[RMDB]
RNA sequence: GGGAACGACUCGAGUAGAGUCGAAAAGGAUACCUAGGAUUCCCUUGUUUGGGUGCCCUGGGCUCCAACUAGUGGUUCCUGUGGUUUCACACCGAAGGCCGCGAAGCUAGGAAAGAAAAAGAUAGAACAUACAGAACUUCUUCGGAAGUUCUGUAUGAAAAGAAACAACAACAACAAC
Reactivity to DMS in 0.01 (KOAc 150mM, MgCl2 10mM, bicine 150mM(pH8.5), 24C), signal-to-noise 2, nucleotides 027 to 126: g000g020a040u000a090c000c000u010a010g020g010a090u010u000c010c000c010u000u000g000u000u000u020g000g000g020u000g040c040c000c090u020g000g010g050c300u010c010c010a020a060c010u000a030g020u000g020g010u000u000c020c020u020g020u020g010g000u000u000u000c090a090c170a180c150c060g010a130a030g000g010c010c040g000c070g000a100a120g000c020u000a080g000g020a040a120a060g000a050a070a080a070a090g000a100u010a110g000a120a170
Reactivity to 2A3 in 0.01 (KOAc 150mM, MgCl2 10mM, bicine 150mM(pH8.5), 24C), signal-to-noise 1, nucleotides 027 to 126: g010g010a000u080a060c000c000u020a010g000g030a000u100u170c000c000c000u010u060g280u030u120u050g020g030g010u020g060c000c010c010u060g000g030g050c040u000c000c010a050a060c010u060a020g030u030g110g040u060u040c000c030u040g050u060g030g020u000u100u120c140a170c010a060c060c030g070a110a030g040g000c020c040g000c010g050a040a010g000c010u010a000g040g060a050a090a080g090a030a100a060a030a010g100a030u160a060g170a030a020
This 177-nucleotide RNA was probed chemically with DMS and 2A3. It was measured as part of the RMDB library VIROID. The reactions ran in a buffer of 150 mM KOAc, 10 mM MgCl2 and 150 mM bicine (pH 8.5), at 24 C.